[RMDB]
RNA sequence: GGGAACGACUCGAGUAGAGUCGAAAAUGGUAGCCCUGGGCAACGUCAAUAGCGGCCUGUUCUCCAAGGACGACGCGCUGGCCGACGCGCUGCUGGCCGCCAGCCGCCAGUCGCUCGACCCGGCCUAGCAUUAUACGGGGUUCGCCCCGUAUAAUGCAAAAGAAACAACAACAACAAC
Reactivity to 2A3 in 0.01 (KOAc 150mM, MgCl2 10mM, bicine 150mM(pH8.5), 24C), signal-to-noise 2, nucleotides 027 to 126: u110g050g050u110a010g010c030c020c070u050g030g010g030c050a060a040c050g030u060c080a100a120u040a210g000c010g030g030c020c020u030g080u050u010c060u000c060c040a070a070g080g000a040c030g040a070c040g040c000g020c050u060g020g010c050c030g080a060c020g000c040g030c010u020g000c010u010g010g010c000c000g030c000c010a000g020c060c000g020c000c000a020g040u070c020g030c030u020c020g110a150c040c000c020g010g000c020c020u010a040
Reactivity to DMS in 0.01 (KOAc 150mM, MgCl2 10mM, bicine 150mM(pH8.5), 24C), signal-to-noise 3, nucleotides 027 to 126: u010g000g010u000a060g000c040c010c060u000g000g000g000c070a100a120c100g000u010c060a110a110u000a060g020c010g010g000c040c010u020g000u000u000c060u020c070c040a160a080g000g000a060c070g000a060c090g010c080g000c070u000g000g000c030c160g020a100c110g000c180g020c020u000g010c080u000g000g010c020c040g010c040c070a040g000c060c070g010c020c020a020g000u010c220g000c030u000c030g010a090c080c050c010g010g000c040c040u010a070